[RMDB]
RNA sequence: GGGAACGACUCGAGUAGAGUCGAAAAGCGGUGUAGAGUCACUAUCAUGGAAUCGCGCUGGACGGCUGCCUGUCAGUCCGGCACUAGAACACAACAGGCUGGUUCCCGGAUGCGCUUCGCGCACCGUGCUGUUCGGGGACGAGAUCCAACGGUGAGCCCCAUUAUAGUUCUUCGGAACUAUAAUGGGAAAAGAAACAACAACAACAAC
Reactivity to 2A3 in 0.01 (KOAc 150mM, MgCl2 10mM, bicine 150mM(pH8.5), 24C), signal-to-noise 2, nucleotides 027 to 156: g020c050g000g040u050g040u110a070g040a050g110u100c040a030c100u090a090u200c080a160u180g130g070a120a020u130c040g000c000g000c060u020g000g010a000c000g010g000c010u020g000c000c020u010g000u000c010a000g000u000c000c000g020g000c000a020c020u010a030g060a140a020c050a010c020a140a030c000a000g000g000c000u000g040g010u010u010c010c000c000g000g010a030u030g090c200g000c160u060u030c060g010c020g000c030a000c000c000g000u020g020c020u000g010u000u000c000g000g000g020g040a000c020g000a000g010a050u260c110c090a020a010c020g020g000u000g010a010g020c000
The record gives the reactivity of an RNA of 207 nucleotides to 2A3. The reactions ran in a buffer of 150 mM KOAc, 10 mM MgCl2 and 150 mM bicine (pH 8.5), at 24 C. 2A3 adducts were read by reverse transcription with SuperScript II with manganese. The 2A3 profile rests on 1,686 reads. 2A3 is a SHAPE reagent: it acylates the 2'-hydroxyl of flexible nucleotides of all four kinds. Values cover nucleotides 27 to 156. Reactivities are rounded to 0.1 and cut off at 0 and 3.